[RMDB]
RNA sequence: GGGAACGACUCGAGUAGAGUCGAAAAUGCAUAAAUCUAACUCCUACCAUCGGCUACACACUGCUUGACACAUAUUGUUAGAAGCACCUCGCAUCUGCAAGUUCUCUUAAGCAAAAUACUUGCAUUAUCCAUUCAGGAGUUUCGACUCCUGAAUGGAAAAAGAAACAACAACAACAAC
Reactivity to 2A3 in 0.01 (KOAc 150mM, MgCl2 10mM, bicine 150mM(pH8.5), 24C), signal-to-noise 7, nucleotides 027 to 126: u110g010c040a050u120a090a120a030u050c040u060a010a080c000u010c010c000u010a060c010c030a070u050c020g020g010c010u080a040c060a010c010a010c060u040g000c010u050u060g050a020c030a000c010a090u090a090u190u180g040u050u060a050g010a130a020g010c000a040c020c010u050c020g040c010a080u050c020u040g000c010a010a040g020u070u010c050u000c000u090u160a080a020g030c040a040a040a040a020u120a090c020u020u010g000c000a030u030u120a070
Reactivity to DMS in 0.01 (KOAc 150mM, MgCl2 10mM, bicine 150mM(pH8.5), 24C), signal-to-noise 3, nucleotides 027 to 126: u040g000c070a040u020a050a130a110u010c020u010a090a050c130u020c030c040u030a110c080c060a070u000c030g000g010c030u000a050c080a060c070a040c070u030g020c010u000u060g000a090c130a060c130a070u010a070u020u010g010u000u000a120g000a110a090g000c010a080c120c030u000c080g000c130a070u010c080u000g000c020a020a050g010u000u020c080u000c040u010u030a110a150g000c060a050a090a100a100u030a050c020u000u000g000c010a090u090u020a070